Chemical mapping of a 177-nucleotide RNA with 2A3 and DMS.
In probing experiments dimethyl sulfate is read out at A N1 and C N3, which are open when not base-paired.
Source: RMDB library RFMREP, as collected in RNAgym.
[RMDB]
RNA sequence: GGGAACGACUCGAGUAGAGUCGAAAAGGAUUGCGGAUUGAAACUCAUCCGCAUGAAGCUGGAUUCGGUAGUAAUCGCGCCUCAGAAGGGCGCGGUGAAUACGUCCCUGCUCCUUGCACACACCGCCGAAGAGUUUAUUGUUCGCAAUAAACUCUUCAAAAGAAACAACAACAACAAC
Reactivity to 2A3 in 0.01 (KOAc 150mM, MgCl2 10mM, bicine 150mM(pH8.5), 24C), signal-to-noise 4, nucleotides 027 to 126: g020g000a050u020u030g000c000g010g020a020u040u150g090a270a150a090c090u060c070a010u010c000c000g000c000a000u010g010a020a020g020c040u040g010g000a180u100u050c030g040g030u050a000g000u010a010a010u000c010g000c000g030c000c000u070c030a150g050a230a070g040g000g000c000g000c010g000g000u000g000a000a010u090a070c000g020u000c000c000c000u000g010c000u000c000c010u000u070g020c000a020c000a020c010a010c060c040g040c040c050
Reactivity to DMS in 0.01 (KOAc 150mM, MgCl2 10mM, bicine 150mM(pH8.5), 24C), signal-to-noise 5, nucleotides 027 to 126: g010g010a150u000u010g020c010g010g000a030u000u010g010a140a200a130c290u000c090a040u010c000c000g020c000a010u000g010a100a070g030c010u010g000g000a130u000u000c080g000g000u000a030g000u000a150a010u000c010g020c000g000c000c000u000c060a180g010a200a300g010g000g000c000g040c000g000g020u000g000a120a200u000a060c020g000u000c050c000c020u000g010c040u000c010c000u000u000g010c130a110c130a110c140a080c040c050g010c200c170